RNA sequence: GGGAACGACUCGAGUAGAGUCGAAAAUUAGUUAAGAUGAGUAUUUAGGAUUUACAAUAAUUCAAAUGGAAGGAGUGAUUUCAAUGACUGCAGAUAUCAUUUCAACAAUUGGUGAUUUUGUAAAAUGAGAUGUCCUGUAAUUCGUUACAGGACAUCUAAAAGAAACAACAACAACAAC
Reactivity to DMS in 0.01 (KOAc 150mM, MgCl2 10mM, bicine 150mM(pH8.5), 24C), signal-to-noise 5, nucleotides 027 to 126: u020u030a080g010u020u010a110a100g000a080u000g010a100g020u010a050u000u010u020a110g010g000a160u000u000u000a040c040a030a030u020a070a060u010u010c020a030a030a050u000g000g020a100a210g000g000a020g010u000g000a020u000u000u000c020a030a090u020g020a070c150u020g020c100a080g000a010u000a000u000c010a010u000u000u000c030a020a180c060a030a070u020u000g000g020u010g000a110u010u010u000u000g000u010a000a020a040a100u020g000
Reactivity to 2A3 in 0.01 (KOAc 150mM, MgCl2 10mM, bicine 150mM(pH8.5), 24C), signal-to-noise 5, nucleotides 027 to 126: u110u070a030g100u060u090a090a040g030a130u120g080a020g070u100a150u080u130u170a170g050g010a070u010u000u010a050c030a030a010u130a100a060u050u110c020a040a040a030u050g060g030a140a150g060g050a000g000u030g040a010u000u080u020c090a110a100u120g160a150c130u100g040c090a020g000a040u020a000u000c000a000u010u060u000c030a070a070c000a010a080u020u030g030g000u080g040a050u040u010u050u080g010u010a010a020a010a040u080g020